This 177-nucleotide RNA was probed chemically with DMS and 2A3. The reactions ran in a buffer of 150 mM KOAc, 10 mM MgCl2 and 150 mM bicine (pH 8.5), at 24 C.

RNA sequence: GGGAACGACUCGAGUAGAGUCGAAAAACGAGUCGUACGCGACUCGAAUGGUAUUGUCGGCGUAAAAGAACAAGACGUCACCGGACGCGACCGGGCUAAAAAGCGAAACGUCAUCUACGGAUGACGAGAAAAUUAUCCUGUUCGCAGGAUAAUUUUCAAAAGAAACAACAACAACAAC
Reactivity to DMS in 0.01 (KOAc 150mM, MgCl2 10mM, bicine 150mM(pH8.5), 24C), signal-to-noise 6, nucleotides 027 to 126: a160c020g000a000g010u000c000g040u010a110c220g040c020g020a020c010u000c010g000a040a020u030g010g010u020a090u010u020g000u000c050g000g020c030g000u010a030a060a120a060g010a120a120c190a120a070g000a040c020g000u010c040a080c000c010g000g000a120c010g000c010g040a060c030c000g000g000g040c260u020a020a040a020a020a020g000c020g020a200a070a160c010g000u000c000a000u000c000u000a110c160g030g000a010u000g000a000c000g020a090
Reactivity to 2A3 in 0.01 (KOAc 150mM, MgCl2 10mM, bicine 150mM(pH8.5), 24C), signal-to-noise 9, nucleotides 027 to 126: a000c010g000a000g000u010c010g010u030a030c260g010c020g110a000c000u000c000g010a010a060u080g030g060u190a150u140u220g150u160c050g000g010c010g020u050a060a070a080a100g140a110a070c090a100a040g090a020c010g000u010c010a010c010c000g000g010a020c000g000c000g010a010c000c000g000g010g010c040u060a020a020a010a000a010g020c020g000a090a020a010c010g000u000c000a000u000c000u020a030c270g100g000a000u000g000a000c000g000a010